[RMDB]
RNA sequence: GGGAACGACUCGAGUAGAGUCGAAAAAAGUCAAUGAUUGGGAGGUGCACGGACCAGUAUGAUGUUAGAGAAAAUGUUUCCAUUCUAGCAUGUGCACUGAAAAUGAACUAUUCUAUAUUCAAGAAGGAUGCUGCACCCAAUAGGUAUCUCCUUGAUGAGUCCAUUAAGUGUUCGCACUUAAUGGACUAAAAGAAACAACAACAACAAC
Reactivity to DMS in 0.01 (KOAc 150mM, MgCl2 10mM, bicine 150mM(pH8.5), 24C), signal-to-noise 2, nucleotides 027 to 156: a060a110g020u010c070a070a100u000g000a090u020u010g020g020g020a260g010g000u000g030c040a030c040g030g000a160c080c010a150g000u000a050u010g010a070u010g010u000u020a050g030a090g010a080a020a060a090u000g010u000u000u000c020c030a160u010u000c040u000a040g010c020a050u000g020u000g000c030a060c030u020g000a040a050a060a070u020g010a040a130c060u000a090u000u000c050u010a110u000a220u020u000c020a020a050g010a080a040g000g000a070u000g010c030u010g010c060a100c080c020c000a050a060u000a110g010g010u000a040u000c010u000c010c010u000u010g010a070u000g010
Reactivity to 2A3 in 0.01 (KOAc 150mM, MgCl2 10mM, bicine 150mM(pH8.5), 24C), signal-to-noise 3, nucleotides 027 to 156: a000a000g080u060c060a040a040u170g050a030u060u050g000g000g000a100g030g000u010g000c000a020c050g080g120a130c030c040a060g070u100a140u250g070a000u010g010u020u020a010g010a000g040a040a070a080a110u130g060u030u100u020c060c020a010u010u070c010u000a000g010c000a020u090g020u030g000c000a000c000u000g000a030a040a000a080u110g030a030a030c020u010a100u150u110c030u080a110u030a070u140u090c030a020a000g020a030a060g090g030a010u020g000c000u020g000c030a060c040c010c010a000a000u040a000g010g000u020a010u020c130u060c010c030u030u000g010a030u060g030